[RMDB]
RNA sequence: GGGAACGACUCGAGUAGAGUCGAAAAGAUAUGGAGUAUCACCACCGUCAUCGAUCGUGUCUCGGAAACGAGACACGGGAGACGAGUGGUGAGUACUCCUAAGUCAAAAGAUAGCUUCGGCUAUCAAUCAUCUUAUGCCCUUCGGGGCAUAAGAUGAAAAAGAAACAACAACAACAAC
Reactivity to DMS in 0.01 (KOAc 150mM, MgCl2 10mM, bicine 150mM(pH8.5), 24C), signal-to-noise 1, nucleotides 027 to 126: g060a070u010a300u010g000g010a050g000u010a000u000c000a030c000c010a000c010c010g020u010c010a250u010c160g000a090u000c000g000u000g020u000c000u000c000g010g000a130a200a150c000g010a010g000a000c010a000c000g010g020g030a070g050a010c000g000a140g010u000g010g010u000g000a010g030u000a000c000u000c010c000u000a000a070g010u000c040a090a060a160a110g000a010u000a000g000c000u010u010c240g000g030c000u000a000u000c000a130a140
Reactivity to 2A3 in 0.01 (KOAc 150mM, MgCl2 10mM, bicine 150mM(pH8.5), 24C), signal-to-noise 1, nucleotides 027 to 126: g100a010u000a040u250g000g030a020g020u000a010u070c000a000c040c010a010c010c010g000u000c000a300u300c060g090a120u020c020g010u030g000u000c010u030c000g030g020a130a120a090c010g040a040g010a020c000a000c000g000g020g000a040g000a010c000g050a090g060u010g000g000u010g000a000g000u010a010c010u040c010c000u010a070a020g090u000c020a000a000a040a240g010a000u030a010g000c020u090u060c300g150g000c010u010a010u000c010a010a090
Structure probing data (DMS and 2A3) for a 177-nucleotide construct. Values cover nucleotides 27 to 126. Reactivities are rounded to 0.1 and cut off at 0 and 3. The reactions ran in a buffer of 150 mM KOAc, 10 mM MgCl2 and 150 mM bicine (pH 8.5), at 24 C. For 2A3 the reverse transcriptase was SuperScript II with manganese.